Structure probing data (DMS and 2A3) for a 207-nucleotide construct. The DMS profile rests on 1,587 reads. The RNA was probed in 150 mM KOAc, 10 mM MgCl2 and 150 mM bicine (pH 8.5) at 24 C. It was measured as part of the RMDB library OK3TST.
[RMDB]
RNA sequence: GGGAACGACUCGAGUAGAGUCGAAAACUAUGAAUAAUAUUCGCAAUUUUCGCGAGCGCUUCGGUUUAACGCAGGAAGAUCUUGCGAAAGUACUCGGUUGUACGCGUGGUGCAGUUUGUCAUUACGAGACAGGCAGAAGGGGAAUGGACAUCAAUCACGUAUAGUACCCAUUCGUGGGUACUAUACGAAAAGAAACAACAACAACAAC
Reactivity to DMS in 0.01 (KOAc 150mM, MgCl2 10mM, bicine 150mM(pH8.5), 24C), signal-to-noise 1, nucleotides 027 to 156: c070u000a060u000g000a110a030u060a040a060u000a300u000u000c020g040c050a160a030u000u000u000u000c010g050c030g000a180g020c180g000c000u000u010c070g020g030u010u020u020a080a210c120g080c030a060g040g020a100a010g000a090u000c020u010u000g020c040g000a020a010a030g000u000a000c040u020c000g030g030u010u000g000u010a080c060g010c040g020u000g040g040u000g030c090a110g020u000u000u010g030u010c010a070u000u000a110c150g030a120g000a120c020a010g020g030c010a120g020a150a100g010g020g000g000a060a090u020g000g010a030c050a080u000c040a050a220u030c040a190
Reactivity to 2A3 in 0.01 (KOAc 150mM, MgCl2 10mM, bicine 150mM(pH8.5), 24C), signal-to-noise 2, nucleotides 027 to 156: c030u030a100u220g060a050a130u240a250a000u110a120u140u120c050g000c030a140a120u020u070u000u040c000g010c000g030a030g010c120g000c060u050u030c010g070g110u150u190u160a130a080c150g030c050a100g090g030a000a060g030a050u070c020u000u040g000c000g010a020a000a000g000u030a010c000u000c070g080g000u010u050g040u090a110c040g040c080g030u050g000g000u020g030c010a010g040u030u110u080g020u040c030a020u060u210a040c050g050a070g000a110c020a000g030g020c010a010g000a080a030g010g020g030g010a020a030u070g010g010a040c030a030u190c040a010a120u230c240a040